An RNA of 207 nucleotides, treated with 2A3 and read out base by base. The reactions ran in a buffer of 150 mM KOAc, 10 mM MgCl2 and 150 mM bicine (pH 8.5), at 24 C. 2A3 adducts were read by reverse transcription with SuperScript II with manganese. The data come from the RNA Mapping Database (RMDB), library M2RFPK. The 2A3 profile rests on 1,169 reads. Values cover nucleotides 27 to 156.
RNA sequence: GGGAACGACUCGAGUAGAGUCGAAAAACAGUCAGUACGCGGACUGAGGGAAACGGGAGCCGGGCUUGGGACAAGAGCCAUCCCAAGUCCAAGGCCAAGUAGGCUCUAGUGAUGGUACGCCAUCACAAAAACUGGUCUACCUUCGGGUAGACCAGAAGACUGACAAUCUGUUCGCAGAUUGUCAGUCAAAAGAAACAACAACAACAAC
Reactivity to 2A3 in 0.01 (KOAc 150mM, MgCl2 10mM, bicine 150mM(pH8.5), 24C), signal-to-noise 1, nucleotides 027 to 156: a000c020a000g050u050c000a000g070u160a060c050g040c090g090g080a010c030u030g000a080g010g040g020a110a060a070c070g090g000g050a080g000c020c040g000g020g000c020u010u000g010g000g020a010c030a090a060g000a010g000c010c000a000u000c000c000c000a000a000g000u000c000c020a040a030g030g000c100c010a110a000g050u110a090g050g000c000u000c010u000a040g000u000g010a000u000g000g010u040a020c160g060c030c000a010u040c000a000c000a000a080a000a000a000c010u000g000g000u000c010u000a000c000c000u010u050c250g030g010g010u000a000g000a000c000c020a000g000a000a010